Chemical mapping of a 207-nucleotide RNA with 2A3 and DMS.
Values cover nucleotides 27 to 156.
As a SHAPE reagent, 2A3 marks flexible, mostly unpaired nucleotides at the ribose 2'-OH.
For DMS, 1,495 sequencing reads were counted.
2A3 adducts were read by reverse transcription with SuperScript II with manganese.
The reactions ran in a buffer of 150 mM KOAc, 10 mM MgCl2 and 150 mM bicine (pH 8.5), at 24 C.
[RMDB]
RNA sequence: GGGAACGACUCGAGUAGAGUCGAAAAAGUGACGUUUUCUGGACAAUAGCUUACACAUCGUACACUGAAGCAUUAGUACAAGUUGAAAACACAGCUAUUACAAAGGUGACGUAUUGUAAUAGUCACGUUAAUAACAUUAAAUGCUCUCAAAUUACUGCAAGCAUGUGCAGUUCGCUGCACAUGCUUGAAAAGAAACAACAACAACAAC
Reactivity to 2A3 in 0.01 (KOAc 150mM, MgCl2 10mM, bicine 150mM(pH8.5), 24C), signal-to-noise 3, nucleotides 027 to 156: a000g050u030g000a020c030g030u040u010u040u070c060u040g030g020a020c080a110a110u090a170g040c040u040u110a020c060a000c000a090u080c030g030u110a040c020a020c050u040g020a040a020g000c010a000u010u090a030g060u030a030c060a160a080g000u000u040g070a130a080a030a000c050a010c000a010g010c000u020a000u030u050a020c010a040a030a000g160g000u090g090a050c090g050u080a090u060u060g010u030a000a030u010a060g030u050c030a010c050g000u040u050a070a030u090a060a020c020a010u070u120a060a060a010u010g000c000u000c000u000c020a070a100a120u100u060a050c020u090g050
Reactivity to DMS in 0.01 (KOAc 150mM, MgCl2 10mM, bicine 150mM(pH8.5), 24C), signal-to-noise 1, nucleotides 027 to 156: a040g000u000g000a060c070g000u010u010u000u000c050u000g010g010a090c140a070a090u010a060g010c060u000u010a190c090a120c130a080u000c070g030u000a080c050a050c030u020g000a130a040g010c030a070u000u000a080g020u000a080c130a020a110g000u000u010g010a090a090a030a020c100a020c140a300g030c020u000a000u020u000a040c050a030a080a070g020g000u000g000a090c220g000u000a080u000u000g020u000a050a110u000a030g000u000c000a030c100g010u020u000a040a090u000a030a100c000a200u000u000a010a130a160u000g000c080u000c030u000c030a000a040a120u000u000a120c050u000g010